RNA sequence: GGGAACGACUCGAGUAGAGUCGAAAAAUCGGUUCAGGUGCCACAGGAAGUGAUUCAGGUAGCAAAGGGUUAUCUGAUAUUUUGAAACCUGCAUUAAGUCGUGGUGAGAUUUCUAUUAUUGGUGCAAGGUACCGCUAAUGUUCGCAUUAGCGGUACCAAAAGAAACAACAACAACAAC
Reactivity to 2A3 in 0.01 (KOAc 150mM, MgCl2 10mM, bicine 150mM(pH8.5), 24C), signal-to-noise 1, nucleotides 027 to 126: a000u040c000g030g040u050u010c000a030g120g000u000g090c020c000a000c010a020g040g040a070a050g090u020g060a050u100u060c000a000g040g000u010a000g000c010a000a190a130g230g040g000u140u060a010u080c000u000g030a030u020a120u150u160u090u050g030a150a060a040c010c000u010g000c010a030u020u200a100a000g040u140c020g000u060g070g000u030g000a050g020a090u140u160u000c030u090a070u120u000a050u100u170g070g070u010g000c010a100a040
Reactivity to DMS in 0.01 (KOAc 150mM, MgCl2 10mM, bicine 150mM(pH8.5), 24C), signal-to-noise 1, nucleotides 027 to 126: a100u010c140g020g000u030u000c080a110g000g050u000g000c010c090a080c040a090g040g010a050a070g050u010g000a120u000u000c010a000g010g020u000a020g000c030a110a040a160g000g020g010u000u020a040u010c090u020g010a070u020a070u000u000u000u000g000a100a100a080c000c000u010g030c090a140u000u000a100a020g000u010c090g010u000g010g000u010g000a060g000a140u010u000u000c050u000a090u000u010a090u020u010g000g010u000g020c110a110a130

Description:
Structure probing data (2A3 and DMS) for a 177-nucleotide construct. The DMS profile rests on 804 reads. As a SHAPE reagent, 2A3 marks flexible, mostly unpaired nucleotides at the ribose 2'-OH. It was measured as part of the RMDB library OK2TST.